[RMDB]
RNA sequence: GGGAACGACUCGAGUAGAGUCGAAAAGAGAUCGCGGCUGGGGCUUAGGACCCCACUCCUGCGAGACAGGAGUAAUCCUAAACAGGGUUUUCACCCUUCCUUUAGUUUCCUUCCUCUCCUGGAGAGGCCGUAAAACUUAGUUCGCUAAGUUUUACGGAAAAGAAACAACAACAACAAC
Reactivity to DMS in 0.01 (KOAc 150mM, MgCl2 10mM, bicine 150mM(pH8.5), 24C), signal-to-noise 2, nucleotides 027 to 126: g010a090g000a080u000c070g000c040g010g010c300u000g000g010g010g020c030u000u010a090g000g010a170c020c020c010c070a020c020u000c040c000u010g030c020g000a070g020a180c060a040g000g010a010g000u010a090a050u000c070c000u010a000a050a150c270a030g000g010g010u010u000u000u010c150a100c030c010c000u000u000c050c040u020u010u010a080g000u000u000u000c000c020u010u010c000c020u000c000u010c000c100u000g010g010a070g010a050g010g020
Reactivity to 2A3 in 0.01 (KOAc 150mM, MgCl2 10mM, bicine 150mM(pH8.5), 24C), signal-to-noise 2, nucleotides 027 to 126: g040a010g010a050u040c020g000c010g070g040c040u020g020g000g000g010c000u040u080a040g030g060a090c010c010c000c010a010c000u000c000c000u030g010c070g190a140g030a050c020a020g000g000a010g000u030a010a030u030c000c000u020a030a040a020c130a050g080g010g040u050u070u270u300c100a040c010c010c000u030u060c030c000u080u130u040a030g000u030u000u040c010c000u050u100c020c000u070c010u010c030c060u060g010g000a020g010a010g010g030